[RMDB]
This 177-nucleotide RNA was probed chemically with 2A3 and DMS. For DMS, 1,757 sequencing reads were counted. For 2A3 the reverse transcriptase was SuperScript II with manganese. The 2A3 profile rests on 2,535 reads. The data come from the RNA Mapping Database (RMDB), library M2PK90. Conditions: 150 mM KOAc, 10 mM MgCl2 and 150 mM bicine (pH 8.5), 24 C. For DMS the reverse transcriptase was MarathonRT.
RNA sequence: GGGAACGACUCGAGUAGAGUCGAAAAAGAAAUCGACGCAAGCCAAGAUAAAAGCGGAACGGUAACCGCAAUACCGUACGGUCAUGGCACGCGAAAGCGAAAGACCGAAACAUGCCAUACAAAAAAACAUUAUUUAAAAGUUCGCUUUUAAAUAAUGAAAAGAAACAACAACAACAAC
Reactivity to 2A3 in 0.01 (KOAc 150mM, MgCl2 10mM, bicine 150mM(pH8.5), 24C), signal-to-noise 2, nucleotides 027 to 126: a000g090a020a100a010u110c040g060a020c020g000c070a040a030g080c040c000a100a010g040a130u130a110a160a030a000g080c000g040g010a010a000c020g030g000u040a080a040c040c000g030c070a020a000u010a030c010c010g010u030a020c020g000g010u010c010a030u060g000g010c050a000c030g030c030g070a080a000a010g000c030g080a220a020a000g010a010c010c020g040a050a020a010c040a020u070g020c000c000a010u030a150c020a050a210a030a010a010a030a000
Reactivity to DMS in 0.01 (KOAc 150mM, MgCl2 10mM, bicine 150mM(pH8.5), 24C), signal-to-noise 3, nucleotides 027 to 126: a060g020a050a080a070u010c040g030a060c040g000c110a060a130g000c060c030a110a100g000a050u000a050a060a080a140g010c010g000g000a060a200c010g000g000u010a060a060c050c030g010c060a070a100u020a300c010c010g000u010a180c030g000g010u000c020a030u010g000g000c040a250c040g000c000g000a030a080a150g030c000g010a070a090a090g020a020c000c020g000a060a050a050c140a030u010g020c020c000a020u000a040c090a000a000a040a060a120a100a110